[RMDB]
RNA sequence: GGGAACGACUCGAGUAGAGUCGAAAAGCUCUUAAUUUAGGCCUGCACAGUUGACAAGGAACCGUUGGGAGUGCUAGUAAGCUGGACGCGCCUACGUAAUCGACAGGUCUGAUCCUUACACGUGCGCCUCUGGAUUCUCUUUCGAGAGAAUCCAGAGAAAAGAAACAACAACAACAAC
Reactivity to 2A3 in 0.01 (KOAc 150mM, MgCl2 10mM, bicine 150mM(pH8.5), 24C), signal-to-noise 5, nucleotides 027 to 126: g010c020u010c000u090u190a210a180u130u060u120a060g000g010c000c020u050g000c040a030c020a100g070u100u070g120a060c050a100a030g030g000a060a060c000c000g050u080u110g020g010g000a090g000u040g010c010u010a020g020u080a120a070g030c030u040g070g040a060c040g030c010g000c010c000u010a050c040g010u060a020a080u100c060g030a020c020a040g010g040u020c060u070g030a030u060c000c000u040u070a020c030a010c040g020u050g020c040g040c000
Reactivity to DMS in 0.01 (KOAc 150mM, MgCl2 10mM, bicine 150mM(pH8.5), 24C), signal-to-noise 3, nucleotides 027 to 126: g000c050u000c040u020u050a040a070u000u020u040a060g000g000c060c020u020g000c130a100c080a080g000u000u000g000a060c130a090a090g030g000a120a110c080c010g010u010u000g030g000g000a130g010u030g030c060u000a070g030u000a070a040g020c020u040g000g020a050c120g000c170g000c080c000u010a000c130g010u000a070a020u050c030g000a070c040a060g010g000u030c070u000g000a080u010c020c030u000u020a090c080a080c120g000u020g010c060g000c080
Notes: Source: RMDB library OK1LIB, as collected in RNAgym. This 177-nucleotide RNA was probed chemically with 2A3 and DMS. 2A3 adducts were read by reverse transcription with SuperScript II with manganese. For DMS the reverse transcriptase was MarathonRT. Values cover nucleotides 27 to 126.